[RMDB]
An RNA of 177 nucleotides, treated with 2A3 and DMS and read out base by base.
For DMS the reverse transcriptase was MarathonRT.
High DMS reactivity at an A or C suggests that its Watson-Crick edge is free.
Reactivities are given for positions 27 through 126.
Conditions: 150 mM KOAc, 10 mM MgCl2 and 150 mM bicine (pH 8.5), 24 C.

RNA sequence: GGGAACGACUCGAGUAGAGUCGAAAAGAUAUGGAAUUUGACGGUGGAAUGUUGUCUUUCGGAAACGAAAGAUACAACGAGAGACCGCAAAUUCCUAAGUCAAAAGGUCAAGGUUCGCCUUGACCAAGAUAGGUAUAUAGUUCGCUAUAUACCUAUCAAAAGAAACAACAACAACAAC
Reactivity to 2A3 in 0.01 (KOAc 150mM, MgCl2 10mM, bicine 150mM(pH8.5), 24C), signal-to-noise 9, nucleotides 027 to 126: g010a000u020a000u050g000g030a020a060u010u020u050g230a300c050g000g040u090g100g300a300a300u300g070u030u000g000u000c000u000u000u000c000g010g000a020a010a010c010g010a010a000a000g010a040u140a040c010a000a000c020g130a080g020a040g130a300c000c000g000c000a000a000a000u000u000c000c000u000a010a000g010u000c020a010a020a070a250g000g000u000c000a000a000g040g030u050u130c300g150c040c000u000u000g000a000c000c000a000a000
Reactivity to DMS in 0.01 (KOAc 150mM, MgCl2 10mM, bicine 150mM(pH8.5), 24C), signal-to-noise 9, nucleotides 027 to 126: g010a020u000a130u000g000g000a020a000u000u000u000g010a140c010g030g020u000g030g020a200a110u020g010u000u010g010u000c000u000u000u000c000g000g010a040a020a060c000g010a010a010a010g000a140u000a030c040a010a010c010g010a190g020a300g000a060c000c000g010c000a000a010a010u000u000c000c000u000a010a060g000u000c010a130a090a140a120g000g010u000c000a010a010g010g010u000u020c300g010c010c000u000u000g000a020c000c010a010a020